[RMDB]
RNA sequence: GGGAACGACUCGAGUAGAGUCGAAAAGAUAUGGAAUCAUCACAGGGAGCUGGUGGUCGGAAACGACCACGACCAGCAUCGAUCUGUAUGAUUCCUAAGUCAAAAUCAUGACGUUCGCGUCAUGAAACAGUAUUGUACCCUUCGGGGUACAAUACUGAAAAGAAACAACAACAACAAC
Reactivity to DMS in 0.01 (KOAc 150mM, MgCl2 10mM, bicine 150mM(pH8.5), 24C), signal-to-noise 3, nucleotides 027 to 126: g020a010u000a130u020g000g000a040a000u000c010a010u000c300a040c020a010g000g030g000a120g040c000u000g020g000u000g000g010u000c000g020g000a000a020a060c000g010a010c000c000a040c110g000a170c300c000a000g020c010a180u000c300g000a030u000c020u000g000u000a010u010g000a020u000u010c000c000u000a010a080g020u020c020a140a060a050a150u000c000a010u000g020a000c000g010u010u010c280g030c010g010u000c000a010u000g000a080a140a150
Reactivity to 2A3 in 0.01 (KOAc 150mM, MgCl2 10mM, bicine 150mM(pH8.5), 24C), signal-to-noise 1, nucleotides 027 to 126: g010a010u000a010u080g000g000a000a000u010c010a010u030c160a030c030a050g000g010g090a260g040c000u000g020g040u000g000g030u000c000g000g000a020a030a000c020g010a010c000c010a010c020g000a040c040c020a010g010c000a040u300c100g140a170u010c000u000g000u020a000u010g010a000u010u000c000c000u000a020a010g000u010c040a030a000a020a300u060c010a000u010g010a000c040g030u020u100c300g020c000g160u020c010a000u000g000a080a030a010